[RMDB]
RNA sequence: GGGAACGACUCGAGUAGAGUCGAAAAGAUAUGGACUGGUCGGGAGCAGUAGUCGGAAACGACUAUACUGCGAAGAACGAUGCAGUCCUAAGUCACACACUUAUAGCACUUCGGUGCUAUAAGUGAACUACAUAACACAGUUCGCUGUGUUAUGUAGAAAAGAAACAACAACAACAAC
Reactivity to DMS in 0.01 (KOAc 150mM, MgCl2 10mM, bicine 150mM(pH8.5), 24C), signal-to-noise 8, nucleotides 027 to 126: g010a010u000a040u010g000g010a000c000u000g000g010u000c000g000g000g010a030g040c000a020g000u000a010g000u000c000g020g000a020a010a040c000g010a020c000u000a030u000a110c050u000g000c000g010a100a150g000a210a300c000g010a010u000g020c000a010g020u000c000c010u000a000a060g000u000c010a230c300a300c010a000c000u000u000a010u000a010g000c000a010c000u000u010c240g020g000u000g010c000u000a000u000a000a000g010u000g000a040a170
Reactivity to 2A3 in 0.01 (KOAc 150mM, MgCl2 10mM, bicine 150mM(pH8.5), 24C), signal-to-noise 5, nucleotides 027 to 126: g000a000u010a000u050g000g000a000c000u010g000g020u010c020g020g010g020a030g000c000a010g030u010a000g010u000c000g000g010a010a000a000c000g000a000c010u010a020u080a040c010u000g000c020g090a140a010g000a000a000c000g010a010u230g260c010a000g000u000c000c000u000a000a000g010u000c000a050c000a010c000a000c140u010u000a010u000a000g000c000a000c020u050u060c300g150g000u000g000c000u000a000u000a000a000g000u000g000a000a000
Conditions: 150 mM KOAc, 10 mM MgCl2 and 150 mM bicine (pH 8.5), 24 C. Structure probing data (DMS and 2A3) for a 177-nucleotide construct.